[RMDB]
An RNA of 177 nucleotides, treated with DMS and 2A3 and read out base by base. For DMS the reverse transcriptase was MarathonRT. For 2A3, 3,948 sequencing reads were counted.
RNA sequence: GGGAACGACUCGAGUAGAGUCGAAAACGCGCGGGCGUCCGGUGGAACCUGCUUGGCUUGGGACCGGAAGACCUGAGGGGUACGUCCGGGGUAGGAGUGAAAUCCCGUAAUCCUGGACGGACCACCGCCAGGCUAUGACUUUCGAGUCAUAGCCUGGAAAAGAAACAACAACAACAAC
Reactivity to DMS in 0.01 (KOAc 150mM, MgCl2 10mM, bicine 150mM(pH8.5), 24C), signal-to-noise 2, nucleotides 027 to 126: c040g000c160g000c090g000g010g000c050g020u030c000c010g010g030u010g000g040a200a110c020c010u000g000c070u030u080g000g020c090u000u030g000g000g000a090c000c010g000g000a140a020g010a140c010c020u010g020a140g000g000g000g000u000a000c000g000u000c000c000g010g000g060g020u000a200g000g000a030g000u020g000a110a160a120u000c030c010c210g010u010a090a030u080c010c040u010g000g000a020c000g010g020a040c000c030a080c000c030g040
Reactivity to 2A3 in 0.01 (KOAc 150mM, MgCl2 10mM, bicine 150mM(pH8.5), 24C), signal-to-noise 3, nucleotides 027 to 126: c030g060c020g010c010g000g030g000c000g060u000c010c000g000g020u050g020g100a070a070c010c000u030g030c090u180u230g120g010c050u040u070g010g020g040a020c000c010g000g020a030a020g040a110c010c000u020g020a060g040g010g000g000u010a010c000g000u000c000c010g000g000g000g010u030a060g020g010a050g010u070g100a040a020a070u020c010c000c000g000u080a030a050u010c000c000u000g010g000a000c000g000g000a000c010c000a020c000c000g000
The data come from the RNA Mapping Database (RMDB), library RFM100. 2A3 adducts were read by reverse transcription with SuperScript II with manganese.